[RMDB]
Structure probing data (DMS and 2A3) for a 177-nucleotide construct.
The data come from the RNA Mapping Database (RMDB), library M2PK50.
For 2A3, 23,054 sequencing reads were counted.
DMS adducts were read by reverse transcription with MarathonRT.
RNA sequence: GGGAACGACUCGAGUAGAGUCGAAAAGGUCACUGGUUCGCCAGUGACCAAAGGCGGGAGAGAGAGAAGCCACUCACCGAAAGGACUCAGCGAAGGACCCAAAAACUACCUGGUUCGCCAGGUAGAAGCUUACUAUUAGGUUCGCCUAAUAGUAAGCAAAAGAAACAACAACAACAAC
Reactivity to DMS in 0.01 (KOAc 150mM, MgCl2 10mM, bicine 150mM(pH8.5), 24C), signal-to-noise 6, nucleotides 027 to 126: g000g010u000c000a000c010u010g000g020u000u000c250g010c000c000a010g010u000g010a000c000c000a010a030a060g000g010c030g000g000g000a060g000a060g010a090g000a270g010a120a100g010c040c030a060c040u000c030a160c030c020g010a050a060a130g010g010a060c050u000c030a080g010c060g000a060a080g000g010a250c010c030c030a060a050a080a130a150c010u010a000c000c000u000g000g000u000u000c230g020c000c000a000g000g010u000a000g000a040a050
Reactivity to 2A3 in 0.01 (KOAc 150mM, MgCl2 10mM, bicine 150mM(pH8.5), 24C), signal-to-noise 7, nucleotides 027 to 126: g000g000u000c000a000c010u000g000g020u040u040c090g070c070c000a010g000u010g000a000c000c000a000a000a000g020g010c020g010g030g000a100g000a010g000a000g010a010g040a200a040g120c020c010a030c000u020c010a060c010c010g040a090a040a020g110g000a020c010u010c050a010g010c020g040a060a030g030g010a030c010c000c010a030a060a010a020a050c000u000a000c000c000u010g010g050u040u050c220g040c060c000a000g000g000u000a000g000a000a000